Structure probing data (DMS) for a 177-nucleotide construct.
[RMDB]
RNA sequence: GGGAACGACUCGAGUAGAGUCGAAAAGUUUGUGAACACCGUCAUUAACAUUGUCAUUGCCAGUAGGGUGUUGAGAGAACGGCUAACUGGAUCACCCUGCGCAGCAUUUAUCGGAGACGACAACAUCGAUUGAAGCGAAGUUCGCUUCGCUUCAAUCAAAAGAAACAACAACAACAAC
Reactivity to DMS in 0.01 (KOAc 150mM, MgCl2 10mM, bicine 150mM(pH8.5), 24C), signal-to-noise 3, nucleotides 027 to 126: g020u000u000u000g040u000g010a060a070c100a100c100c030g000u010c040a100u010u000a040a090c080a070u010u000g000u010c040a080u010u000g000c010c070a190g050u010a040g000g030g030u000g010u020u010g000a300g000a040g000a050a050c150g020g000c070u000a080a090c030u000g040g020a190u000c030a020c000c010c010u000g040c040g030c140a140g010c010a020u000u010u000a060u020c100g010g000a120g000a080c030g010a020c070a020a080c100a120u030c120
The RNA was probed in 150 mM KOAc, 10 mM MgCl2 and 150 mM bicine (pH 8.5) at 24 C. The DMS profile rests on 2,268 reads.